[RMDB]
RNA sequence: GGGAACGACUCGAGUAGAGUCGAAAAGGUACGAGGAAGGCAUGGUCGACGCGUCGAGUUUCUCAUCUUCCUUUUGUAUGUGAUGCUGCGAUGACAUUGGCGCGUGCGUGUGCGUGUGUGUGCGUGCGCGGACCUCGUAUUUCGAUACGAGGUCCGCAAAAGAAACAACAACAACAAC
Reactivity to 2A3 in 0.01 (KOAc 150mM, MgCl2 10mM, bicine 150mM(pH8.5), 24C), signal-to-noise 1, nucleotides 027 to 126: g000g000u020a000c000g070a070g110g070a120a160g020g060c020a020u090g020g160u150c000g060a020c030g010c000g020u080c020g040a100g050u000u190u060c060u000c000a010u060c040u060u030c020c000u110u120u050u130g130u160a040u080g130u070g010a050u040g000c000u000g010c090g060a040u040g020a020c190a210u120u060g000g000c010g020c000g000u040g130c000g010u090g000u000g000c020g030u050g000u090g000u000g010u030g040c000g010u010g080c130